Chemical mapping of a 177-nucleotide RNA with DMS and 2A3. For 2A3 the reverse transcriptase was SuperScript II with manganese. Reactivities are given for positions 27 through 126. Reactivities are rounded to 0.1 and cut off at 0 and 3. The RNA was probed in 150 mM KOAc, 10 mM MgCl2 and 150 mM bicine (pH 8.5) at 24 C.
RNA sequence: GGGAACGACUCGAGUAGAGUCGAAAAGACUUUAAAGUUUGAACUUUAUGGCGCUUUUUCUGCUGUUACAUGGUUCAAGUAAAAGUGGAUUGGGUCACCUACCAUGUGGUGAAUCUCCAACGGGUCAGGACGAACAUUGGUUCGCCGAUGUUCGUCCAAAAGAAACAACAACAACAAC
Reactivity to DMS in 0.01 (KOAc 150mM, MgCl2 10mM, bicine 150mM(pH8.5), 24C), signal-to-noise 2, nucleotides 027 to 126: g000a060c010u000u000u000a010a060a110g020u010u010u000g000a060a050c000u000u000u000a050u000g000g010c040g000c070u040u020u020u000u000c090u020g000c010u020g020u000u030a060c070a010u010g030g010u000u010c050a060a080g010u020a010a020a060a060g040u000g030g000a140u030u010g020g000g000u000c000a010c010c000u000a070c090c080a090u040g000u010g000g030u030g010a050a130u010c090u030c000c010a030a070c080g000g000g020u000c070a190
Reactivity to 2A3 in 0.01 (KOAc 150mM, MgCl2 10mM, bicine 150mM(pH8.5), 24C), signal-to-noise 4, nucleotides 027 to 126: g030a000c010u060u040u070a100a100a000g070u030u080u110g040a070a000c000u000u040u080a030u070g020g000c020g030c040u030u050u030u030u000c080u080g060c010u080g050u160u080a070c020a020u070g030g000u030u060c050a050a070g050u060a060a130a020a000g050u070g050g010a120u010u100g030g000g000u010c020a010c000c000u050a050c020c090a120u160g030u030g030g020u020g010a040a070u020c070u010c030c000a020a040c020g020g000g070u060c070a040